[RMDB]
RNA sequence: GGGAACGACUCGAGUAGAGUCGAAAACUAUUUAUAGACAGAACAGUGGAAAACGUAUAUCGCUAUAAACCUUACACUCCGAAUCUUCCAGUCGUACCAUUCCACAUAGGCGAGGCAUAAGCGAAAGACCUGAUCGACUAUUCGUAGUCGAUCAGGUAAAAGAAACAACAACAACAAC
Reactivity to DMS in 0.01 (KOAc 150mM, MgCl2 10mM, bicine 150mM(pH8.5), 24C), signal-to-noise 2, nucleotides 027 to 126: c030u000a020u030u020u050a040u030a070g010a020c050a190g000a090a200c050a160g020u040g000g020a090a020a120a050c140g020u000a070u000a060u010c000g000c030u010a020u000a040a050a070c140c040u000u020a030c080a090c030u030c000c020g020a050a050u010c000u000u000c050c000a070g060u000c020g040u000a050c000c020a100u010u000c020c020a010c070a050u000a070g010g020c020g050a030g010g000c080a010u020a050a070g020c090g030a040a070a070g000
Reactivity to 2A3 in 0.01 (KOAc 150mM, MgCl2 10mM, bicine 150mM(pH8.5), 24C), signal-to-noise 2, nucleotides 027 to 126: c000u000a040u050u060u010a110u030a020g120a080c070a030g050a150a000c000a080g100u050g100g090a050a100a000a000c000g000u010a120u020a040u080c090g000c020u020a020u050a160a110a030c000c010u040u050a060c030a020c030u020c040c030g040a100a040u030c030u000u010c030c000a000g040u010c030g000u020a050c000c000a020u050u030c010c000a080c010a090u080a040g100g000c040g060a050g030g020c030a080u130a120a020g000c020g010a070a030a000g070
Structure probing data (DMS and 2A3) for a 177-nucleotide construct. 2A3 is a SHAPE reagent: it acylates the 2'-hydroxyl of flexible nucleotides of all four kinds. For 2A3 the reverse transcriptase was SuperScript II with manganese. For 2A3, 1,772 sequencing reads were counted. Conditions: 150 mM KOAc, 10 mM MgCl2 and 150 mM bicine (pH 8.5), 24 C.